This 177-nucleotide RNA was probed chemically with 2A3 and DMS.
The DMS profile rests on 2,730 reads.
High 2A3 reactivity points to a flexible backbone, as in loops and unpaired stretches.
Reactivities are given for positions 27 through 126.
The reactions ran in a buffer of 150 mM KOAc, 10 mM MgCl2 and 150 mM bicine (pH 8.5), at 24 C.
RNA sequence: GGGAACGACUCGAGUAGAGUCGAAAAGAUAUGGACUGUACUAGUACUAUUCACGCGUUGAAAUCGGAAACGAUGGAGCGUAGAUAGGACCGUACAGUCCUAAGUCAAACCUGCGUUCGCGCAGGAAGAUCUUUAUCCACUUCGGUGGAUAAAGAUCAAAAGAAACAACAACAACAAC
Reactivity to 2A3 in 0.01 (KOAc 150mM, MgCl2 10mM, bicine 150mM(pH8.5), 24C), signal-to-noise 3, nucleotides 027 to 126: g010a020u070a040u160g000g000a000c020u010g000u000a000c020u040a030g020u010a010c000u010a010u080u130c020a020c010g020c010g300u300u080g040a040a040a020u010c000g000g060a030a070a040c020g010a020u020g000g060a020g000c000g030u010a010g000a000u000a000g030g020a000c010c000g000u000a000c010a000g000u010c000c000u000a020a020g020u000c000a050a030a120c000c010u040g010c020g000u040u080c300g000c000g000c120a000g020g000a010a010
Reactivity to DMS in 0.01 (KOAc 150mM, MgCl2 10mM, bicine 150mM(pH8.5), 24C), signal-to-noise 3, nucleotides 027 to 126: g010a060u000a300u010g000g000a020c010u000g010u000a000c000u000a090g030u000a130c010u000a010u010u000c050a030c010g030c010g020u000u020g000a070a110a010u010c000g010g000a170a090a170c010g010a020u000g000g000a080g020c000g020u000a030g010a010u010a000g000g000a080c210c290g000u000a000c020a010g030u000c000c000u000a000a000g010u000c020a050a130a180c010c000u000g000c010g020u000u010c200g040c030g000c000a010g000g000a040a030